Structure probing data (DMS and 2A3) for a 177-nucleotide construct. Conditions: 150 mM KOAc, 10 mM MgCl2 and 150 mM bicine (pH 8.5), 24 C. The data come from the RNA Mapping Database (RMDB), library OK2TST. DMS adducts were read by reverse transcription with MarathonRT. For DMS, 1,967 sequencing reads were counted.
RNA sequence: GGGAACGACUCGAGUAGAGUCGAAAAGCGUGUGGGCGAUGAUGUGCAGCCCGGGGACGUCGCCGUGCGUGCCGGAACAAUCAUCGGGGCUGCCCAGGUGGGGCUGCUAGCGGCGGUCGGCCGCGAACCCACCUCGUAGUUUCGACUACGAGGUGGGAAAAGAAACAACAACAACAAC
Reactivity to DMS in 0.01 (KOAc 150mM, MgCl2 10mM, bicine 150mM(pH8.5), 24C), signal-to-noise 2, nucleotides 027 to 126: g040c060g000u000g020u020g010g020g000c060g020a080u000g000a120u000g030u040g010c030a120g050c060c010c000g000g020g010g000a050c040g020u000c140g060c050c130g000u000g020c060g010u010g020c040c010g000g010a080a070c090a140a110u000c050a060u000c020g000g030g010g000c060u000g000c020c040c060a100g010g020u000g010g010g010g020c070u000g000c060u000a100g010c020g000g000c020g010g040u000c140g010g020c010c020g020c010g000a050a200
Reactivity to 2A3 in 0.01 (KOAc 150mM, MgCl2 10mM, bicine 150mM(pH8.5), 24C), signal-to-noise 1, nucleotides 027 to 126: g040c050g000u130g010u070g140g120g000c030g040a010u040g010a000u070g050u060g040c010a000g050c030c000c030g010g010g000g030a020c000g000u050c000g040c150c050g010u100g040c000g030u060g110c000c010g020g030a090a030c060a070a070u110c040a040u090c070g040g030g000g000c010u020g010c000c020c000a040g080g040u120g060g000g000g020c020u020g000c000u050a060g000c020g000g030c020g070g180u110c020g080g000c000c000g050c000g010a020a010